Chemical mapping of a 177-nucleotide RNA with DMS and 2A3. DMS adducts were read by reverse transcription with MarathonRT. Conditions: 150 mM KOAc, 10 mM MgCl2 and 150 mM bicine (pH 8.5), 24 C. The DMS profile rests on 860 reads.
RNA sequence: GGGAACGACUCGAGUAGAGUCGAAAAUUUGCCUGUGGAUGUGGGGCAUCAUAUACAGCUAAUGAUGUCGAAGUCCAAUCAUCUGGCAUGAUUAAGCCAAAUGCUCUUCUUUGUGCUACUUGCCCCUCUAAGACUCAAACUUCGGUUUGAGUCUUAGAAAAGAAACAACAACAACAAC
Reactivity to DMS in 0.01 (KOAc 150mM, MgCl2 10mM, bicine 150mM(pH8.5), 24C), signal-to-noise 2, nucleotides 027 to 126: u000u010u020g020c010c020u000g050u020g030g000a000u000g010u020g050g040g010g000c000a000u020c020a020u020a250u000a160c250a110g010c160u020a160a040u000g000a020u020g000u000c000g010a140a240g000u010c010c020a040a180u000c070a070u000c050u000g010g000c040a020u010g010a050u000u000a110a100g000c040c040a050a090a060u010g010c130u010c090u010u000c010u000u000u000g020u000g020c050u010a090c100u000u000g000c010c000c010c110u010
Reactivity to 2A3 in 0.01 (KOAc 150mM, MgCl2 10mM, bicine 150mM(pH8.5), 24C), signal-to-noise 1, nucleotides 027 to 126: u020u010u090g060c000c000u060g050u090g040g010a040u050g040u120g100g230g020g020c000a000u000c010a000u060a030u050a080c060a020g070c070u190a200a020u020g030a010u020g000u000c000g010a030a030g040u000c020c000a000a050u070c050a030u030c020u080g020g010c000a010u040g050a070u020u180a060a050g000c000c020a020a050a030u080g000c030u030c020u230u060c010u040u110u020g060u070g060c000u010a040c030u040u060g000c000c000c000c000u000